[RMDB]
RNA sequence: GGGAACGACUCGAGUAGAGUCGAAAAGUUGGCGAUGGCCUGGGCGCCCGAGGCACAGGCGGCGUAGCUGCUCGAGAUCCGCGCGCCGGUCCAGCCGAGCGCCUGGGCGAAGGUGGCGCCCGUGACAAGUCAGUCCACUAUUCGUAGUGGACUGACUAAAAGAAACAACAACAACAAC
Reactivity to DMS in 0.01 (KOAc 150mM, MgCl2 10mM, bicine 150mM(pH8.5), 24C), signal-to-noise 2, nucleotides 027 to 126: g030u000u000g000g030c060g030a190u000g020g000c020c010u000g000g000g010c010g000c000c010c000g010a110g020g010c050a040c090a110g000g000c010g020g000c000g020u000a130g010c020u000g000c140u000c120g000a130g000a080u000c060c070g030c050g010c050g000c030c010g030g000u000c020c040a080g010c060c020g010a070g010c000g000c020c010u000g010g000g000c030g010a030a080g020g000u010g020g000c050g000c000c000c050g020u020g000a090c140a080
About this RNA:
The record gives the reactivity of an RNA of 177 nucleotides to DMS.